Source: RMDB libraries RFM100 and RFMREP, as collected in RNAgym.
An RNA of 177 nucleotides, treated with 2A3 and DMS and read out base by base.
DMS adducts were read by reverse transcription with MarathonRT.
The reactions ran in a buffer of 150 mM KOAc, 10 mM MgCl2 and 150 mM bicine (pH 8.5), at 24 C.
RNA sequence: GGGAACGACUCGAGUAGAGUCGAAAAAACGUGAAAUGCUCCGGCGCCAGAGGAUGUGGCUGCGGCCGAUUAGGUAGACGGUGGGGUAACGGCCCACCGUGCCAGUAAUCGGUACGGGUUGUGAGAGACCAUGUUAUGCGUUCGCGCAUAACAUGGUAAAAGAAACAACAACAACAAC
Reactivity to 2A3 in 0.01 (KOAc 150mM, MgCl2 10mM, bicine 150mM(pH8.5), 24C), signal-to-noise 1, nucleotides 027 to 126: a000a000c010g020u060g010a210a030a000u240g000c070u020c040c040g000g020c020g030c020c050a070g000a030g080g030a110u190g000u090g170g060c010u000g100c060g010g080c000c000g000a000u010u000a000g040g000u020a120g020a060c000g000g000u000g010g000g000g000u010a010a010c060g070g000c000c050c000a000c000c000g010u000g000c000c000a000g070u070a000a000u020c000g000g000u120a000c000g070g010g000u000u020g000u010g000a100g030a020g040
Reactivity to DMS in 0.01 (KOAc 150mM, MgCl2 10mM, bicine 150mM(pH8.5), 24C), signal-to-noise 2, nucleotides 027 to 126: a060a100c110g020u000g000a060a070a040u030g000c070u010c010c040g010g010c010g010c060c020a120g000a150g000g000a120u000g010u000g000g000c030u020g030c030g000g000c000c000g000a010u000u010a070g000g040u000a100g000a090c020g020g020u000g000g010g010g020u000a060a080c300g000g000c000c010c000a010c000c000g030u000g020c010c000a090g000u020a030a000u000c000g000g010u000a080c050g010g020g000u000u000g010u000g000a100g000a210g000